[RMDB]
RNA sequence: GGGAACGACUCGAGUAGAGUCGAAAAAAAGGGGGACUCCGGAACUCCCUGCAGGUUGGGCACGAAGCCCCCACCGGGCGCUCCCCUCGGCAGACCGCCCAUUGGGUUCACACCCCCAGGCCGCGGGAAACGCGCUUGUUCGCAAGCGCGAAAAGAAACAACAACAACAAC
Reactivity to DMS in 0.01 (KOAc 150mM, MgCl2 10mM, bicine 150mM(pH8.5), 24C), signal-to-noise 5, nucleotides 027 to 129: a030a010a030g010g000g000g000g000a000c000u020c000c040g000g030a220a030c090u010c070c010c010u030g030c080a050g020g030u000u050g050g000g040c060a160c110g050a150a110g080c040c030c050c030c030a170c120c070g000g030g000c060g030c100u000c090c030c010c000u010c070g020g050c000a090g000a190c130c060g020c010c010c030a170u050u090g000g000g000u080u020c150a080c130a060c020c000c000c000c000a030g040g000c110c070g040c160g000g020g060a030a110a130
Reactivity to 2A3 in 0.01 (KOAc 150mM, MgCl2 10mM, bicine 150mM(pH8.5), 24C), signal-to-noise 2, nucleotides 027 to 129: a000a000a010g040g000g000g020g010a020c020u030c020c000g020g030a050a040c060u050c020c010c010u020g040c010a030g020g050u200u150g060g000g000c080a040c160g150a090a030g020c010c000c000c000c000a000c010c020g000g020g010c070g020c060u050c000c000c000c000u020c000g020g000c010a030g060a130c030c000g020c020c020c000a010u020u140g000g000g000u090u080c030a020c020a010c070c000c030c000c010a000g020g000c010c010g000c020g010g020g000a080a020a030